This 207-nucleotide RNA was probed chemically with 2A3 and DMS.
2A3 adducts were read by reverse transcription with SuperScript II with manganese.
The DMS profile rests on 11,308 reads.
The 2A3 profile rests on 16,866 reads.
[RMDB]
RNA sequence: GGGAACGACUCGAGUAGAGUCGAAAAGCGUACUACCUACAUGAAAUUAGGCAACAGCUUAGGUUGUCAGGGAUCCCAAAUAGGAUCCCUUGGAUUUACCUAAGACAUGCCUAUGAGUAAUGUAGGUAUCGCAAACGUUAGGCUUCGGCCUAACGAAGAAAUAUACUGUGUUCGCACAGUAUAUUUCAAAAGAAACAACAACAACAAC
Reactivity to 2A3 in 0.01 (KOAc 150mM, MgCl2 10mM, bicine 150mM(pH8.5), 24C), signal-to-noise 8, nucleotides 027 to 156: g000c010g050u110a090c050u010a000c010c000u000a000c000a010u010g020a030a010a030u010u010a010g000g000c010a040a040c050a260g050c020u000u010a000g010g000u010u010g010u030c010a000g000g000g000a000u030c020c030c060a160a220a110u300a090g000g000a000u000c000c000c000u020u070g020g000a000u140u080u240a020c000c000u010a010a010g060a070c020a030u050g000c000c000u000a000u000g000a000g010u000a000a000u000g000u000a000g000g010u000a000u010c010g000c000a040a060a010c010g000u000u000a000g000g000c010u020u040c290g090g000c000c000u000a000a000c000g000a030a010
Reactivity to DMS in 0.01 (KOAc 150mM, MgCl2 10mM, bicine 150mM(pH8.5), 24C), signal-to-noise 4, nucleotides 027 to 156: g020c010g030u010a050c060u000a020c000c000u010a020c020a020u000g010a250a220a300u000u000a020g000g010c000a040a070c100a200g020c000u010u000a020g010g020u000u010g010u000c020a050g010g010g010a010u000c020c010c020a030a150a260u000a060g010g000a010u010c000c010c000u010u000g020g010a030u000u000u000a010c010c000u000a030a020g030a060c060a300u000g020c000c000u000a000u000g010a120g030u000a110a020u000g010u000a000g000g000u000a000u000c030g030c020a090a050a150c020g020u000u000a010g020g030c000u000u010c300g040g010c010c000u010a010a010c010g000a040a100